[RMDB]
RNA sequence: GGGAACGACUCGAGUAGAGUCGAAAAUAUCAAUGGUAUUGUGCAUAUUCGGUAUGUCUGCAUAUUGGUUUACCUAUUCCUGGCUUCCAACCUAUCUGGCAGAGGAGAGGGGCCUUGAAAUGGUUACCACGAUUUAUCAGUUCGCUGAUAAAUCGUGAAAAGAAACAACAACAACAAC
Reactivity to 2A3 in 0.01 (KOAc 150mM, MgCl2 10mM, bicine 150mM(pH8.5), 24C), signal-to-noise 7, nucleotides 027 to 126: u200a020u080c060a050a050u080g060g000u080a090u150u180g070u070g070c050a010u050a020u100u160c130g140g010u070a030u050g030u030c020u030g050c070a050u020a060u140u060g040g020u040u090u080a080c020c000u050a140u010u020c010c010u010g000g000c000u160u050c020c040a080a080c020c010u110a130u150c050u080g150g000c100a050g030a020g070g030a060g030a070g030g010g010g000c010c000u020u030g010a050a020a020u070g030g020u040u020a050c050
Reactivity to DMS in 0.01 (KOAc 150mM, MgCl2 10mM, bicine 150mM(pH8.5), 24C), signal-to-noise 4, nucleotides 027 to 126: u040a030u010c040a060a050u010g000g010u000a040u020u010g010u030g040c080a030u010a030u000u050c140g040g000u010a020u000g010u020c050u000g020c040a030u000a050u010u010g010g010u000u010u020a040c020c020u000a300u000u000c000c030u000g000g000c010u000u020c010c010a200a180c040c000u000a040u010c090u000g000g010c070a080g010a010g000g010a080g010a300g000g010g010g000c010c010u000u000g000a000a010a300u000g000g000u000u010a060c070
An RNA of 177 nucleotides, treated with 2A3 and DMS and read out base by base. Source: RMDB library OK1LIB, as collected in RNAgym. The 2A3 profile rests on 6,094 reads. The RNA was probed in 150 mM KOAc, 10 mM MgCl2 and 150 mM bicine (pH 8.5) at 24 C.